[RMDB]
RNA sequence: GGGAACGACUCGAGUAGAGUCGAAAAUUCCAUCUAAAGCUAAAUAUUGGUGCGAGACCGAUAGCGAACAAGUACCGUGAGGGAAAGAUGAAAAGAACUUUGAAAAGAGAGUUAAAGAGUACCUGAAGUUAUAUAGACAGUUCGCUGUCUAUAUAACAAAAGAAACAACAACAACAAC
Reactivity to DMS in 0.01 (KOAc 150mM, MgCl2 10mM, bicine 150mM(pH8.5), 24C), signal-to-noise 4, nucleotides 027 to 126: u020u000c000c010a130u010c070u010a070a110a200g010c020u000a060a130a130u010a060u010u000g010g000u000g000c140g000a120g000a110c040c020g010a070u000a040g010c030g000a060a090c080a040a090g000u000a120c060c020g010u020g010a160g010g010g000a060a090a090g000a070u000g000a050a050a080a100g000a070a060c030u010u000u000g000a070a040a080a100g010a090g010a040g010u010u000a060a080a090g000a130g000u000a070c050c030u000g000a100a120
Reactivity to 2A3 in 0.01 (KOAc 150mM, MgCl2 10mM, bicine 150mM(pH8.5), 24C), signal-to-noise 2, nucleotides 027 to 126: u030u000c000c000a010u050c050u190a190a010a030g050c000u060a060a090a170u210a260u120u140g000g020u060g070c060g060a060g130a050c020c000g050a010u030a000g030c010g020a040a000c020a130a000g020u020a040c030c020g040u040g050a050g030g000g010a000a000a020g020a040u110g000a000a100a000a000g030a030a020c040u100u170u140g090a100a100a000a010g120a000g000a010g010u030u070a030a180a000g100a020g040u020a020c000c000u000g020a110a010
Structure probing data (DMS and 2A3) for a 177-nucleotide construct. The 2A3 profile rests on 1,688 reads. It was measured as part of the RMDB library RFMREP.